[RMDB]
Chemical mapping of a 177-nucleotide RNA with DMS and 2A3.
The RNA was probed in 150 mM KOAc, 10 mM MgCl2 and 150 mM bicine (pH 8.5) at 24 C.
RNA sequence: GGGAACGACUCGAGUAGAGUCGAAAACCGAUGGCUUCGCGAAUAGAAGGAUGCCAGUUAACGGCGCGAUUGACCGCGUCAUUGAGCGUCAGGUUGCCCGGCGCGGCGGCGCUGAGCGGCAACUCAGAAAUAUUUUAAUCUUCGGAUUAAAAUAUUUAAAAGAAACAACAACAACAAC
Reactivity to DMS in 0.01 (KOAc 150mM, MgCl2 10mM, bicine 150mM(pH8.5), 24C), signal-to-noise 8, nucleotides 027 to 126: c010c010g010a130u010g000g010c010u000u000c020g010c060g020a160a110u030a160g010a140a120g000g010a020u010g010c000c020a060g010u010u020a110a120c180g010g000c000g010c000g010a150u010u030g010a080c160c080g010c080g020u000c010a070u020u020g000a150g020c040g010u010c050a120g010g000u000u000g000c010c000c010g000g000c000g010c010g010g020c260g000g010c000g000c000u000g000a070g040c110g000g020c010a020a010c010u010c130a110g000
Reactivity to 2A3 in 0.01 (KOAc 150mM, MgCl2 10mM, bicine 150mM(pH8.5), 24C), signal-to-noise 7, nucleotides 027 to 126: c000c000g020a080u050g020g020c010u040u020c050g060c040g200a200a150u130a290g080a130a040g060g010a010u070g020c000c000a010g010u040u120a060a050c080g000g000c000g000c010g050a080u060u220g090a110c070c090g020c050g010u010c000a010u040u140g070a060g020c050g060u060c060a030g040g010u010u020g010c000c010c000g010g000c010g000c000g070g080c090g120g010c000g000c010u020g050a050g050c050g000g000c000a010a000c010u010c050a020g080

Description:
For 2A3 the reverse transcriptase was SuperScript II with manganese. Values cover nucleotides 27 to 126. DMS adducts were read by reverse transcription with MarathonRT.